[RMDB]
RNA sequence: GGGAACGACUCGAGUAGAGUCGAAAAAAUGGAAAUAAUAGCUCCUUCCUCGGUGGCUUGUUGACAGAAUCAAAUGCAGUAACCCUGGUAAAACGUCUUAAGUGCUCAGUAUGAAUUUGCUCUUAAUAUUGUCAAUAUGUUUUUCCUUCUCAUUCCAUACGGUAUUUAAUUUCGAUUAAAUACCGUAAAAAGAAACAACAACAACAAC
Reactivity to DMS in 0.01 (KOAc 150mM, MgCl2 10mM, bicine 150mM(pH8.5), 24C), signal-to-noise 4, nucleotides 027 to 156: a070a080u000g000g010a090a100a110u000a110a150u000a140g000c060u000c020c010u000u000c010c020u000c040g020g040u010g000g020c030u000u000g040u010u000g020a300c040a130g020a090a300u010c070a040a070a070u010g010c040a110g010u000a090a090c060c020c030u000g020g030u010a070a060a060a090c050g010u000c070u000u000a050a070g010u010g010c020u010c030a040g040u000a080u000g000a100a120u000u000u000g010c030u010c060u000u000a060a110u010a060u000u000g010u000c010a060a120u000a120u010g000u010u000u000u000u010c000c020u000u000c030u000c060a170u000u010c030c030a270
Reactivity to 2A3 in 0.01 (KOAc 150mM, MgCl2 10mM, bicine 150mM(pH8.5), 24C), signal-to-noise 5, nucleotides 027 to 156: a010a010u150g010g030a100a040a020u190a090a070u090a120g010c020u010c000c000u010u040c000c020u040c030g040g020u040g030g000c030u050u100g010u020u060g040a050c020a030g080a060a020u110c030a030a080a060u130g020c010a010g010u060a050a050c010c020c010u020g000g010u040a060a070a040a030c020g050u020c010u100u050a100a040g020u010g050c000u000c050a040g040u080a080u140g070a110a080u060u050u080g010c010u020c010u040u080a080a040u080a100u150u070g020u020c010a020a030u050a050u130g080u000u040u020u020u030c010c000u060u050c040u010c020a050u160u100c070c030a070